[RMDB]
RNA sequence: GGGAACGACUCGAGUAGAGUCGAAAAUUAAAGAUUAGAAUUUAAGUUCAAUAUCUACCUUUUUAAUGUCAGUUGCUUUAAAUACUCUUUCAUCUUUAUACUCAGUUUUUAAGUCUACAUAUUUUGACCUCUUACAUUCAUUCGUGAAUGUAAGAGGAAAAGAAACAACAACAACAAC
Reactivity to 2A3 in 0.01 (KOAc 150mM, MgCl2 10mM, bicine 150mM(pH8.5), 24C), signal-to-noise 2, nucleotides 027 to 126: u070u000a010a060a060g010a000u000u070a010g000a090a000u030u170u300a150a040g000u150u060c020a000a050u010a060u210c010u020a060c000c000u020u080u130u090u300a140a090u070g020u000c070a010g030u140u010g130c000u060u110u000a020a100a060u130a070c010u000c030u040u170u000c030a060u080c060u080u160u060a100u040a060c040u020c070a150g010u050u010u060u070u300a000a090g060u000c000u050a160c110a260u220a260u170u050u040u140g030a050
Reactivity to DMS in 0.01 (KOAc 150mM, MgCl2 10mM, bicine 150mM(pH8.5), 24C), signal-to-noise 1, nucleotides 027 to 126: u000u000a050a030a090g000a050u020u030a260g010a070a040u020u010u020a100a130g010u010u010c000a030a090u000a060u010c010u020a170c090c010u030u000u030u000u000a030a070u010g000u000c120a070g010u000u010g010c050u000u010u010a020a060a050u010a060c090u000c010u000u000u000c110a010u000c050u000u000u000a030u000a110c040u000c030a110g010u010u000u000u000u000a050a110g000u000c040u000a040c150a070u000a080u000u000u010u000g000a300
Background:
The record gives the reactivity of an RNA of 177 nucleotides to 2A3 and DMS. The data come from the RNA Mapping Database (RMDB), library OK2TRN. Conditions: 150 mM KOAc, 10 mM MgCl2 and 150 mM bicine (pH 8.5), 24 C. For DMS the reverse transcriptase was MarathonRT. For 2A3 the reverse transcriptase was SuperScript II with manganese.